[RMDB]
RNA sequence: GGGAACGACUCGAGUAGAGUCGAAAAGUCUCCAACGAUAACGUCGAAAAAUAUGUGAUGGUGAUCGCUAUCGGGAGAAUACAGCGAUGUCCACGUGUACACUGUGCAAUUCCUUGACAGUGUCACAGGCUACGGUGCGUUUCGACGCACCGUAGCCAAAAGAAACAACAACAACAAC
Reactivity to 2A3 in 0.01 (KOAc 150mM, MgCl2 10mM, bicine 150mM(pH8.5), 24C), signal-to-noise 2, nucleotides 027 to 126: g010u000c000u000c010c000a130a120c060g000a000u080a060a060c050g020u000c000g190a020a000a080a080a110u230a100u240g070u010g150a230u200g030g030u140g130a020u150c000g000c000u000a000u080c110g130g040g000a050g030a050a030u200a030c080a000g070c070g030a000u030g040u060c000c000a090c080g000u000g150u100a000c000a000c000u000g020u130g280c060a020a300u130u300c050c050u190u030g000a000c000a000g000u000g000u000c000a000c000a000